Chemical mapping of a 177-nucleotide RNA with DMS and 2A3. The RNA was probed in 150 mM KOAc, 10 mM MgCl2 and 150 mM bicine (pH 8.5) at 24 C.
RNA sequence: GGGAACGACUCGAGUAGAGUCGAAAAUGGGAUGGAACAUCUCUGGCUGACUCAGAGCGGUUAGCCGCCGGUGAGUUGCAUUCACUAUGCAGAAACCGCAACGUGAUUUCAGAAAUGGGACACGAAAGGGAUGGAUAAGCUUCGGUUUGUCCAUCCCAAAAGAAACAACAACAACAAC
Reactivity to DMS in 0.01 (KOAc 150mM, MgCl2 10mM, bicine 150mM(pH8.5), 24C), signal-to-noise 9, nucleotides 027 to 126: u020g010g000g000a040u000g000g010a130a130c070a030u000c020u000c020u010g000g000c030u000g010a100c070u000c050a140g010a280g010c060g010g000u010u010a070g010c030c030g010c090c100g000g000u000g000a060g010u020u020g000c130a070u020u010c150a070c140u030a060u010g020c000a040g000a070a100a040c030c010g000c130a110a220c050g010u000g000a150u000u000u000c010a010g000a060a070a090u000g000g010g000a070c030a010c030g010a070a100a120
Reactivity to 2A3 in 0.01 (KOAc 150mM, MgCl2 10mM, bicine 150mM(pH8.5), 24C), signal-to-noise 9, nucleotides 027 to 126: u150g020g000g020a020u040g040g130a080a050c040a130u010c010u000c060u070g010g000c010u010g010a020c000u020c090a080g030a040g200c090g030g010u020u030a010g020c000c010g030c030c010g010g010u030g020a140g040u090u040g030c010a010u060u080c050a040c180u110a040u070g000c010a000g070a070a050a020c010c010g010c060a030a050c010g000u010g070a300u000u010u010c010a010g020a020a040a030u020g000g000g000a000c010a000c020g060a100a040a040